Chemical mapping of a 207-nucleotide RNA with DMS and 2A3. The DMS profile rests on 1,898 reads. DMS adducts were read by reverse transcription with MarathonRT. The reactions ran in a buffer of 150 mM KOAc, 10 mM MgCl2 and 150 mM bicine (pH 8.5), at 24 C. For 2A3, 2,761 sequencing reads were counted. 2A3 adducts were read by reverse transcription with SuperScript II with manganese.
RNA sequence: GGGAACGACUCGAGUAGAGUCGAAAAUCGGACGGCGGCCAUUAGUCGCAACGCAAAGCCGCGGCAAGUGGAGUUAGCGAGAAGAGACUAGGCUUUGGUUUCUUCAAGUGAAGCGGUCACCAAUCAGAAUAGCUUGCGCAGUUCGCUGCGCAAGCAAGAUUUAUCGUACGUUCGCGUACGAUAAAUCAAAAGAAACAACAACAACAAC
Reactivity to DMS in 0.01 (KOAc 150mM, MgCl2 10mM, bicine 150mM(pH8.5), 24C), signal-to-noise 1, nucleotides 027 to 156: u000c060g000g010a100c060g010g040c010g010g010c000c000a140u000u000a180g040u000c030g010c000a080a020c040g020c030a130a230a300g000c000c020g010c000g000g060c040a040a040g040u000g030g010a180g000u000u000a170g030c000g010a300g010a070a080g000a100g000a070c010u000a090g040g000c190u010u000u000g030g030u010u000u000c000u000u020c000a060a300g000u030g000a110a100g010c010g060g000u000c000a080c000c000a040a250u000c060a210g030a080a080u010a090g010c000u000u000g000c020g110c020a000g010u010u000c200g090c010u000g000c000g040c020a000a000g010c010a010a020
Reactivity to 2A3 in 0.01 (KOAc 150mM, MgCl2 10mM, bicine 150mM(pH8.5), 24C), signal-to-noise 4, nucleotides 027 to 156: u110c020g010g030a020c040g110g020c000g020g070c000c000a030u040u030a020g020u020c010g000c020a060a060c060g040c150a150a150a040g080c080c060g010c010g020g000c040a060a030g010u000g020g040a110g060u150u120a020g010c010g000a020g000a060a000g010a000g000a000c010u050a040g160g140c040u170u180u160g000g000u010u000u000c000u000u010c010a040a020g010u030g050a080a000g040c030g040g020u010c010a020c090c020a020a070u160c040a010g110a180a080u120a040g000c000u000u010g000c000g000c000a000g010u030u120c160g020c140u000g000c000g010c000a000a000g010c000a000a000